[RMDB]
RNA sequence: GGGAACGACUCGAGUAGAGUCGAAAAAUCGACCGGGUCCCGCAGAACCCGAUGGAGUCCCCCGCCAUCCCCUGACGGAGAAAACUGGUCCCGAUAGGGGCACCCACAAUAGGAUGGCAGGAGGGGAAGGGCAUGGCGUUCGCGCCAUGCAAAAGAAACAACAACAACAAC
Reactivity to 2A3 in 0.01 (KOAc 150mM, MgCl2 10mM, bicine 150mM(pH8.5), 24C), signal-to-noise 2, nucleotides 027 to 129: a000u020c010g000a020c010c030g040g000g000u000c030c020c000g000c030a010g050a030a010c000c010c010g030a020u030g010g070a030g100u050c000c000c010c000c000g000c000c000a020u020c020c050c000c020u050g020a130c050g090g000a120g060a100a060a010a120c100u100g040g010u010c000c000c000g050a090u160a170g000g000g010g010c000a010c000c000c000a020c010a010a120u070a110g000g000a010u000g000g030c090a100g070g010a150g000g000g000g000a020a020g070g090
Reactivity to DMS in 0.01 (KOAc 150mM, MgCl2 10mM, bicine 150mM(pH8.5), 24C), signal-to-noise 4, nucleotides 027 to 129: a140u040c000g040a090c080c000g000g000g000u030c040c030c070g060c130a000g050a110a080c040c070c000g030a070u020g000g000a150g040u040c040c000c000c040c110g050c030c060a040u020c020c000c090c170u040g010a130c290g020g020a110g000a090a040a100a050c110u120g070g000u010c030c010c000g040a220u040a100g040g010g020g020c010a020c000c000c000a130c180a060a010u080a070g040g000a040u010g000g010c040a040g000g000a090g000g000g010g060a050a010g090g000

This 170-nucleotide RNA was probed chemically with 2A3 and DMS.
The data come from the RNA Mapping Database (RMDB), library 15KLIB.
The 2A3 profile rests on 3,468 reads.
Values are in units of 0.01, from 0 to 300, in steps of 10.
High DMS reactivity at an A or C suggests that its Watson-Crick edge is free.
The RNA was probed in 150 mM KOAc, 10 mM MgCl2 and 150 mM bicine (pH 8.5) at 24 C.
For 2A3 the reverse transcriptase was SuperScript II with manganese.